[RMDB]
Overview: Structure probing data (2A3 and DMS) for a 207-nucleotide construct. For DMS, 1,754 sequencing reads were counted. For 2A3, 1,808 sequencing reads were counted.
RNA sequence: GGGAACGACUCGAGUAGAGUCGAAAAUCUGUUCGAGGAAUACAGCGACCGUAUCGUGUACGGUUCCGAGCAGGAAGAUGAGGCGUUGCAGAACGCGGUGGACUGGGUGUUCCGUGAUCGCACGGAUGACUUCCGCUCCGACCUGUACGCUCGCAUCAAUAUCCCGGAGAUUCGUCUCCGGGAUAUUAAAAGAAACAACAACAACAAC
Reactivity to 2A3 in 0.01 (KOAc 150mM, MgCl2 10mM, bicine 150mM(pH8.5), 24C), signal-to-noise 4, nucleotides 027 to 156: u020c000u000g010u000u000c020g020a100g100g170a220a140u210a230c110a110g040c040g100a010c010c040g060u070a060u260c210g050u170g060u170a040c020g000g000u000u080c010c020g000a000g000c020a030g030g050a070a020g010a020u040g020a010g000g060c030g030u130u190g000c040a000g020a110a080c070g050c070g090g000u040g040g020a220c240u300g030g080g000u070g070u060u040c010c000g000u000g040a190u230c180g040c260a000c010g000g000a010u070g060a020c020u080u000c020c000g000c010u000c000c020g060a090c000c000u040g020u010a000c000g000c050u050c080g070c000a020u010c000
Reactivity to DMS in 0.01 (KOAc 150mM, MgCl2 10mM, bicine 150mM(pH8.5), 24C), signal-to-noise 1, nucleotides 027 to 156: u000c020u010g010u000u000c020g030a160g050g010a140a080u000a070c060a120g040c060g000a080c040c160g010u000a300u000c140g040u020g020u010a030c010g050g040u010u000c050c020g070a080g000c010a020g020g030a120a140g020a080u010g000a160g000g000c060g020u000u030g000c010a050g000a080a120c030g040c040g000g010u000g020g000a060c300u000g000g000g020u000g000u010u010c020c030g030u000g020a150u000c270g030c060a020c010g010g030a010u000g000a030c030u020u000c000c010g030c010u010c080c000g000a120c060c010u000g020u000a030c030g010c030u010c010g010c030a080u000c060